[RMDB]
RNA sequence: GGGAACGACUCGAGUAGAGUCGAAAAUGGCACCUGGUUGGUGGCGCCUGUCUCAUAUCAGUGAGGGACAAAACAACUCCUUGUUUAUCCCAGCUUGGCUUUUGCUCUGUGCCCAUGCCUGGUUCAUUGUGUUAUUAAUGUUCGCAUUAAUAACACAAAAAGAAACAACAACAACAAC
Reactivity to DMS in 0.01 (KOAc 150mM, MgCl2 10mM, bicine 150mM(pH8.5), 24C), signal-to-noise 9, nucleotides 027 to 126: u010g000g010c030a060c020c030u000g010g010u010u010g010g030u010g000g020c080g020c030c030u000g010u010c010u000c030a090u010a090u010c100a070g010u010g010a140g000g010g010a040c060a050a030a040a040c050a040a080c210u010c100c080u000u000g010u000u000u010a180u020c020c010c000a220g010c040u000u010g010g000c090u000u010u000u000g010c030u010c050u000g010u000g010c010c010c030a080u010g010c060c020u000g000g000u000u010c080a110u000
Reactivity to 2A3 in 0.01 (KOAc 150mM, MgCl2 10mM, bicine 150mM(pH8.5), 24C), signal-to-noise 5, nucleotides 027 to 126: u070g030g000c030a020c030c030u040g090g000u050u100g060g050u060g020g020c020g010c000c020u040g030u010c000u020c020a130u120a090u140c050a030g060u050g110a120g010g020g010a010c040a020a080a010a000c010a020a030c030u070c050c030u050u050g040u040u090u040a040u020c000c000c000a010g020c020u030u050g030g010c010u060u050u070u070g020c000u010c040u080g040u050g020c000c000c010a030u070g000c000c010u040g030g000u030u040c030a040u030